[RMDB]
RNA sequence: GGGAACGACUCGAGUAGAGUCGAAAAGACACGACGGAGACGUCGUGUCAAGUCCAGUGCGAAAGCACUGGACAAAUAAGGGCUGUUUUCCUCGCUGAUUUUCAGCCCCAAACAAAAAAUUUCAGCAAUAUGACGUAAAUUUCGAUUUACGUCAUAUAAAAGAAACAACAACAACAAC
Reactivity to 2A3 in 0.01 (KOAc 150mM, MgCl2 10mM, bicine 150mM(pH8.5), 24C), signal-to-noise 3, nucleotides 027 to 126: g010a000c010a000c000g010a010c010g020g010a050g020a050c000g000u000c000g000u000g000u000c000a000a000g000u000c010c000a000g000u000g000c020g090a140a030a030g000c000a000c000u000g010g000a000c000a000a010a000u120a050a050g000g000g000c010u000g000u010u010u010u010c010c030u030c070g010c010u000g010a010u000u010u010u020c000a000g000c000c000c020c030a010a020a000c010a010a010a000a010a010a020u020u080u030c000a000g000c000a000
Reactivity to DMS in 0.01 (KOAc 150mM, MgCl2 10mM, bicine 150mM(pH8.5), 24C), signal-to-noise 5, nucleotides 027 to 126: g000a010c000a010c000g010a010c000g010g010a260g000a210c010g040u000c000g020u000g010u010c010a030a080g000u000c000c000a010g010u000g000c000g010a120a090a170g000c010a000c000u000g000g000a000c000a020a040a070u020a130a170g000g000g010c000u000g000u000u000u000u000c080c080u010c170g000c000u000g000a020u000u000u000u000c010a000g000c000c000c000c160a010a010a180c040a000a000a010a000a010a030u000u000u000c000a010g020c020a160

Structure probing data (2A3 and DMS) for a 177-nucleotide construct.
The DMS profile rests on 7,827 reads.
The data come from the RNA Mapping Database (RMDB), library OK2TRN.
DMS adducts were read by reverse transcription with MarathonRT.
2A3 adducts were read by reverse transcription with SuperScript II with manganese.
The 2A3 profile rests on 17,559 reads.